This 177-nucleotide RNA was probed chemically with DMS and 2A3. For DMS, 26,584 sequencing reads were counted. The reactions ran in a buffer of 150 mM KOAc, 10 mM MgCl2 and 150 mM bicine (pH 8.5), at 24 C. DMS adducts were read by reverse transcription with MarathonRT.
[RMDB]
RNA sequence: GGGAACGACUCGAGUAGAGUCGAAAAGAAGGAUUUGGGCGGGAUCGCCAGGUAGAAGGCGUGGUUGCCGCCGGUGCCGCGCUCGGCGUCGAGCUUCUCCAGCGUCUCGGCGAGUUGGGCGAACGCGCCCGUCUUGAUAAUUCGUUAUCAAGACGGGAAAAGAAACAACAACAACAAC
Reactivity to DMS in 0.01 (KOAc 150mM, MgCl2 10mM, bicine 150mM(pH8.5), 24C), signal-to-noise 9, nucleotides 027 to 126: g010a100a100g000g000a120u000u010u010g020g010g020c030g010g010g000a070u000c020g010c010c010a060g010g010u010a110g020a140a110g010g010c020g030u000g010g010u010u010g020c040c030g010c040c040g010g010u010g000c040c030g000c080g010c040u000c030g010g000c020g020u000c020g000a050g000c110u000u000c060u000c050c080a120g010c140g000u000c020u000c020g000g010c010g000a060g010u000u010g020g010g010c020g000a050a070c090g010c080g010
Reactivity to 2A3 in 0.01 (KOAc 150mM, MgCl2 10mM, bicine 150mM(pH8.5), 24C), signal-to-noise 7, nucleotides 027 to 126: g070a040a030g100g060a080u150u190u290g090g000g010c040g020g030g030a050u080c020g000c020c030a020g090g060u150a070g050a290a030g030g010c030g020u040g020g070u100u150g080c020c030g010c020c020g000g010u030g010c010c010g020c000g010c030u030c020g030g010c010g020u020c010g000a010g010c010u130u050c060u040c040c010a050g040c010g080u040c010u010c020g020g000c040g010a030g090u200u200g040g000g000c020g000a030a020c040g020c010g030